[RMDB]
RNA sequence: GGGAACGACUCGAGUAGAGUCGAAAAACGCAUGAUACGUCAUGCGAAUGGGAUGAUGUGAGGGUAGGUGGCCGAGAGACCGAUGAGGAGCUAAUCGGCCCCUGACCAGCGGACGUACGCGUCCGCAUUGUGUAAGCUGGUUCGCCAGCUUACACAAAAAAGAAACAACAACAACAAC
Reactivity to DMS in 0.01 (KOAc 150mM, MgCl2 10mM, bicine 150mM(pH8.5), 24C), signal-to-noise 3, nucleotides 027 to 126: a110c020g030c000a010u050g010a020u000a090c240g070u020c010a010u020g010c000g010a050a040u010g000g000g000a120u000g000a100u020g000u000g000a070g010g010g010u010a010g010g020u020g000g000c000c010g000a020g000a110g010a110c020c000g020a080u050g020a300g010g000a120g000c020u020a080a210u020c010g010g000c010c000c000c000u000g010a050c040c030a080g000c030g000g020a020c000g030u020a080c240g010c060g010u000c000c000g010c000a010
Reactivity to 2A3 in 0.01 (KOAc 150mM, MgCl2 10mM, bicine 150mM(pH8.5), 24C), signal-to-noise 1, nucleotides 027 to 126: a000c010g000c000a000u000g010a030u070a050c300g150u000c030a000u000g000c000g010a010a050u070g040g040g070a100u110g000a020u090g050u020g090a100g030g000g050u010a000g000g070u210g050g000c000c020g010a030g030a000g010a040c010c040g020a080u300g040a050g010g030a110g010c050u110a000a280u000c020g020g000c000c000c000c000u000g020a050c000c000a000g000c000g000g030a010c000g000u020a000c270g010c000g050u010c000c000g000c010a010